[RMDB]
RNA sequence: GGGAACGACUCGAGUAGAGUCGAAAACUCUUUUACUCGGCAUGAUACCACCGUUAUCGGGUCAACAGAGUAGUUGUAAAUGACAACAAUGCUCAGGGUUAUGCUCUCGCUGCCUAAUGGCGGUGCGCGGACGACUCAAUGUUCGCAUUGAGUCGAACGUUUGGGAUUUAUUCGUAAAUCCCAAACGAAAAGAAACAACAACAACAAC
Reactivity to DMS in 0.01 (KOAc 150mM, MgCl2 10mM, bicine 150mM(pH8.5), 24C), signal-to-noise 2, nucleotides 027 to 156: c060u010c050u040u000u000u010a060c040u000c020g010g040c020a110u000g000a170u000a070c010c020a260c020c030g010u000u000a070u000c030g000g000g010u000c020a080a090c110a100g010a060g020u000a070g020u000u000g010u000a060a130a170u010g020a190c040a060a060c020a090a060u000g020c040u010c030a120g040g020g000u000u000a080u010g020c000u010c020u010c050g000c010u000g000c010c010u000a090a140u000g040g020c020g020g040u010g000c090g050c050g000g000a140c010g010a010c010u000c010a020a010u000g010u010u000c240g020c010a020u000u000g010a030g010u000c020g020a020a080
Reactivity to 2A3 in 0.01 (KOAc 150mM, MgCl2 10mM, bicine 150mM(pH8.5), 24C), signal-to-noise 5, nucleotides 027 to 156: c020u020c020u040u110u030u150a140c100u060c020g020g000c030a020u120g010a030u080a120c010c010a000c020c010g110u080u030a030u090c030g000g010g030u050c030a020a020c050a030g000a010g020u060a070g020u010u030g030u040a120a250a180u280g080a020c000a030a000c010a050a110u080g010c020u010c030a010g040g020g000u110u080a030u140g040c000u000c010u000c070g020c040u010g000c000c000u200a300a080u210g000g000c030g000g000u020g010c120g010c040g080g040a060c020g000a000c000u000c000a000a010u020g010u080u090c190g000c080a000u000u000g000a000g000u000c010g020a040a010
The record gives the reactivity of an RNA of 207 nucleotides to DMS and 2A3. The reactions ran in a buffer of 150 mM KOAc, 10 mM MgCl2 and 150 mM bicine (pH 8.5), at 24 C. For 2A3 the reverse transcriptase was SuperScript II with manganese. Values cover nucleotides 27 to 156. It was measured as part of the RMDB library M2RFPK.